RNA sequence: GGGAACGACUCGAGUAGAGUCGAAAAGAAAGCCGUUUUAUCCCCGCCCAGUUUGUAGCAUCCAGCUGAGCUGGCAGACCUGCAGCAGCUGGCUGGUUGGUGCAAACAGGGGGAGGAUGGACCUCAAAUUGUUAUGGUCUUUCGAGACCAUAACAAUAAAAGAAACAACAACAACAAC
Reactivity to DMS in 0.01 (KOAc 150mM, MgCl2 10mM, bicine 150mM(pH8.5), 24C), signal-to-noise 3, nucleotides 027 to 126: g000a100a160a130g010c030c060g010u000u000u010u030a080u000c010c000c010c030g010c010c010c010a090g010u000u010u010g010u010a000g000c010a010u010c000c010a010g000c000u010g010a030g020c000u000g020g010c030a080g000a160c170c130u020g000c030a110g000c010a000g000c000u000g000g000c000u000g000g000u000u000g000g000u000g000c000a010a010a010c010a080g010g010g000g010g010a030g000g010a010u000g010g000a080c040c020u000c080a100a130
Reactivity to 2A3 in 0.01 (KOAc 150mM, MgCl2 10mM, bicine 150mM(pH8.5), 24C), signal-to-noise 8, nucleotides 027 to 126: g130a030a080a010g090c040c030g020u020u010u040u100a060u020c020c000c010c000g200c020c040c010a020g000u010u000u000g010u020a030g090c000a000u000c000c000a000g010c010u150g120a010g020c000u020g060g000c010a040g080a270c030c140u080g000c020a140g010c000a000g000c040u000g000g010c000u000g000g000u010u000g040g100u000g000c000a000a000a000c010a000g000g000g000g000g000a020g000g000a020u030g000g020a070c010c030u130c050a130a160
Structure probing data (DMS and 2A3) for a 177-nucleotide construct. For DMS the reverse transcriptase was MarathonRT.